The data come from the RNA Mapping Database (RMDB), library M2PK90. Chemical mapping of a 177-nucleotide RNA with 2A3 and DMS.
[RMDB]
RNA sequence: GGGAACGACUCGAGUAGAGUCGAAAAAAAAAGGCACUUCAGGUGGCUCUGGGGCGAAAGAACUGACGACAGACCAGAAGCGGGAAGCCGUUGAGUUUAUGUGUGAUGCGACCGGUCUGUCGAAAAACAUAACCUAAAAGUUCGCUUUUAGGUUAUGAAAAGAAACAACAACAACAAC
Reactivity to 2A3 in 0.01 (KOAc 150mM, MgCl2 10mM, bicine 150mM(pH8.5), 24C), signal-to-noise 3, nucleotides 027 to 126: a000a000a000a010a040g060g010c020a010c010u070u070c060a050g050g000u030g070g010c020u000c030u060g010g010g010g010c030g010a080a040a020g060a040a030c070u070g060a030c000g000a000c010a000g000a000c020c010a030g020a030a000g010c010g030g060g060a040a030g030c020c020g020u040u100g120a180g110u110u170u080a080u070g150u030g020u060g040a050u100g000c010g020a020c010c020g000g020u020c000u000g000u000c000g010a010a000a000a000a000
Reactivity to DMS in 0.01 (KOAc 150mM, MgCl2 10mM, bicine 150mM(pH8.5), 24C), signal-to-noise 5, nucleotides 027 to 126: a040a030a060a090a060g000g010c040a040c050u010u010c100a040g010g020u000g010g000c030u010c040u010g010g010g000g010c040g010a060a050a060g010a060a090c060u010g010a190c040g000a030c010a010g010a030c000c010a070g010a040a210g010c020g010g000g010a120a180g000c020c010g010u010u010g000a100g010u000u000u010a030u010g010u020g010u000g000a150u010g020c020g010a210c040c050g010g000u000c010u000g000u000c000g000a010a030a030a100a100

The reactions ran in a buffer of 150 mM KOAc, 10 mM MgCl2 and 150 mM bicine (pH 8.5), at 24 C. For DMS, 5,185 sequencing reads were counted.